[RMDB]
RNA sequence: GGGAACGACUCGAGUAGAGUCGAAAACCGUUGCCGUUCGCGGCAACGGGAAGCAAGCAAGCAGCGCAACGAGACAACACGAUAAUGAGAUCGCGCAUGCUGAAAAGCCACGCUUCGGCGUGGCUAAUCAAAUAGGUAGAUUCGUCUACCUAUUUGAAAAAGAAACAACAACAACAAC
Reactivity to 2A3 in 0.01 (KOAc 150mM, MgCl2 10mM, bicine 150mM(pH8.5), 24C), signal-to-noise 7, nucleotides 027 to 126: c000c010g010u000u000g000c000c010g010u040u040c270g000c020g110g000c010a000a000c010g000g000g010a020a010g080c070a050a030g040c020a040a010g000c010a010g010c010g000c030a070a080c090g050a020g060a120c060a140a030c060a060c110g130a080u120a260a120u280g090a080g020a130u080c030g000c010g000c050a090u040g000c010u020g020a090a090a010a000g000c000c000a010c000g020c000u040u070c210g070g000c000g000u000g000g000c000u000a000a010
Reactivity to DMS in 0.01 (KOAc 150mM, MgCl2 10mM, bicine 150mM(pH8.5), 24C), signal-to-noise 9, nucleotides 027 to 126: c000c000g010u000u010g010c000c000g020u000u010c200g030c020g010g020c000a000a000c000g010g010g010a060a080g010c150a100a100g010c130a110a040g010c010a030g000c010g010c020a100a100c100g000a090g000a090c100a060a070c090a090c130g000a110u010a080a100u010g010a140g000a090u000c060g010c020g010c020a080u000g020c010u010g000a070a060a090a050g010c000c000a010c000g010c000u000u010c160g020g010c000g020u000g000g000c000u000a010a040
Chemical mapping of a 177-nucleotide RNA with 2A3 and DMS. For DMS, 19,845 sequencing reads were counted. 2A3 adducts were read by reverse transcription with SuperScript II with manganese.